[RMDB]
Structure probing data (2A3 and DMS) for a 177-nucleotide construct. Values cover nucleotides 27 to 126. 2A3 adducts were read by reverse transcription with SuperScript II with manganese. It was measured as part of the RMDB library OK1LIB. The RNA was probed in 150 mM KOAc, 10 mM MgCl2 and 150 mM bicine (pH 8.5) at 24 C.

RNA sequence: GGGAACGACUCGAGUAGAGUCGAAAACAGCUGCCGGCAAGAUUGCAAAAUUUGCAGGAGGGAGCGUAGGAUUCAGAACGACCCAUUGGAGACCAACUCCAAAGAAAACGAAGACAAAGCGUGCAAAAUUCUACAAUUCGUUCGCGAAUUGUAGAAUAAAAGAAACAACAACAACAAC
Reactivity to 2A3 in 0.01 (KOAc 150mM, MgCl2 10mM, bicine 150mM(pH8.5), 24C), signal-to-noise 7, nucleotides 027 to 126: c040a030g030c010u120g070c010c010g020g000c030a020a050g060a240u070u110g020c030a020a050a090a170u070u080u040g010c010a000g020g090a060g030g050g020a020g010c020g020u040a070g020g070a060u070u110c070a040g070a160a050c060g060a080c050c000c010a050u010u040g010g000a020g020a070c030c030a090a190c030u020c020c010a000a030a020g060a010a040a010a020c100g020a030a010g030a040c050a030a080a010g050c040g030u050g020c010a030a090a060
Reactivity to DMS in 0.01 (KOAc 150mM, MgCl2 10mM, bicine 150mM(pH8.5), 24C), signal-to-noise 5, nucleotides 027 to 126: c040a140g010c010u010g000c000c010g020g000c030a040a050g020a110u010u020g030c100a060a070a070a140u020u020u010g000c040a080g000g000a110g020g010g000a070g010c030g000u000a050g000g010a060u030u010c090a080g000a130a070c200g010a090c070c030c010a200u010u000g000g010a060g000a180c230c260a090a130c010u000c010c010a030a030a090g000a030a040a080a070c120g010a080a040g010a090c110a070a100a090g000c040g010u000g010c080a040a060a090